[RMDB]
RNA sequence: GGGAACGACUCGAGUAGAGUCGAAAAAGUCGCUAUAAAAUGGGGAUAUAACUACAUAGUUUGGAGGAAUCAAAAUGGUAGAUGUAGCAUUUGUCUGUCUUGGCAAUAUAUGUCGUUCUCCAAUGGCAUACGCAGUACAAUUCGUUGUACUGCGUAUAAAAGAAACAACAACAACAAC
Reactivity to 2A3 in 0.01 (KOAc 150mM, MgCl2 10mM, bicine 150mM(pH8.5), 24C), signal-to-noise 5, nucleotides 027 to 126: a000g090u050c020g000c070u040a030u150a170a160a030a090u140g040g000g010g000a010u050a010u040a200a060c030u070a030c020a080u130a050g060u020u050u040g070g010a070g000g120a060a050u090c040a040a060a060a110u110g080g000u070a060g010a130u050g020u070a010g000c040a050u040u020u060g050u000c040u020g070u020c020u020u060g030g000c030a080a010u040a000u010a030u260g010u000c010g000u000u010c010u000c010c030a070a090u080g040g000c030
Reactivity to DMS in 0.01 (KOAc 150mM, MgCl2 10mM, bicine 150mM(pH8.5), 24C), signal-to-noise 8, nucleotides 027 to 126: a100g010u000c060g020c030u000a060u000a050a060a090a110u010g010g000g000g000a110u000a070u000a060a100c040u000a050c050a050u000a080g010u000u000u000g010g010a070g010g010a110a060u010c070a030a040a040a060u010g000g010u000a060g010a080u000g000u000a030g020c060a080u000u000u000g000u000c040u000g010u000c090u010u000g000g010c030a030a050u010a070u010a090u000g010u000c010g010u000u000c010u000c000c090a080a090u010g010g020c230